[RMDB]
RNA sequence: GGGAACGACUCGAGUAGAGUCGAAAACGAAUAGAAUUCGUUCUAUUCGAAUGACUGCUAAUAGCAGAGUUGACUGCGCCGAGCAGAAACGGCAAAGGAAAAAGUAGCCCAGAUUCGUCUGGGCUAAGGUAAAACAACUCUUCGGAGUUGUUUUACCAAAAGAAACAACAACAACAAC
Reactivity to 2A3 in 0.01 (KOAc 150mM, MgCl2 10mM, bicine 150mM(pH8.5), 24C), signal-to-noise 1, nucleotides 027 to 126: c000g000a000a000u010a030g000a010a010u060u050c090g050u080u000c030u040a030u050u030c010g000a070a030u120g050a080c010u010g010c000u030a070a080u070a300g000c010a000g020a050g120u100u080g130a240c000u000g000c020g000c000c010g050a050g160c090a100g190a110a020a030c030g000g040c000a030a080a050g020g000a110a090a090a060a010g140u010a000g020c020c000c020a000g000a000u030u070c170g060u000c060u010g000g000g010c000u000a000a000
Reactivity to DMS in 0.01 (KOAc 150mM, MgCl2 10mM, bicine 150mM(pH8.5), 24C), signal-to-noise 2, nucleotides 027 to 126: c010g020a030a000u010a000g010a010a020u020u020c170g010u000u000c000u000a010u010u000c000g020a080a100u000g010a190c010u010g000c000u010a060a080u020a100g000c000a010g010a250g010u010u000g000a180c010u000g000c300g020c080c040g000a050g000c050a070g010a050a130a070c010g020g000c050a070a210a090g010g020a090a020a090a090a140g010u000a030g010c000c000c000a000g000a030u000u020c160g020u000c010u000g010g000g000c000u010a000a030